RNA sequence: GGGAACGACUCGAGUAGAGUCGAAAAACUUGUAUGAUGGUAACAUGUUUAUUAAAUUUCCUGAAGUAGUAUUUGAAAGUACACUUAGGAUUACUAGAACUCUGUCAACUCAGUACUGCCGGUUCGGAUGGAUCCGUAUUCGUACGGAUCAAAAGAAACAACAACAACAAC
Reactivity to 2A3 in 0.01 (KOAc 150mM, MgCl2 10mM, bicine 150mM(pH8.5), 24C), signal-to-noise 9, nucleotides 027 to 129: a010c030u040u040g020u030a090u080g090a030u080g040g050u070a040a020c010a060u070g050u060u070u020a180u070u150a090a110a110u080u070u010c010c000u050g060a050a000g010u240a000g010u010a060u050u100u200g250a190a090a010g010u010a000c010a000c010u010u010a010g000g010a040u030u040a060c050u050a050g080a080a020c030u020c020u070g050u050c020a020a050c040u030c050a010g020u040a040c050u050g040c020c000g020g000u020u030c020g010g010a030u050g060
Reactivity to DMS in 0.01 (KOAc 150mM, MgCl2 10mM, bicine 150mM(pH8.5), 24C), signal-to-noise 9, nucleotides 027 to 129: a060c060u020u010g010u010a080u030g030a080u020g000g020u030a120a070c050a030u000g010u000u000u000a100u030u030a070a080a130u020u010u010c030c010u020g030a030a030g020u020a100g040u020a000u020u010u020g060a080a080a070g030u020a040c070a020c010u030u020a030g030g020a020u000u020a030c070u020a060g030a070a070c050u010c010u000g020u010c060a040a060c110u030c090a030g020u050a070c090u000g030c030c030g000g050u000u000c040g020g020a070u010g020
An RNA of 170 nucleotides, treated with 2A3 and DMS and read out base by base. Conditions: 150 mM KOAc, 10 mM MgCl2 and 150 mM bicine (pH 8.5), 24 C. For 2A3, 55,973 sequencing reads were counted. Source: RMDB library 15KLIB, as collected in RNAgym.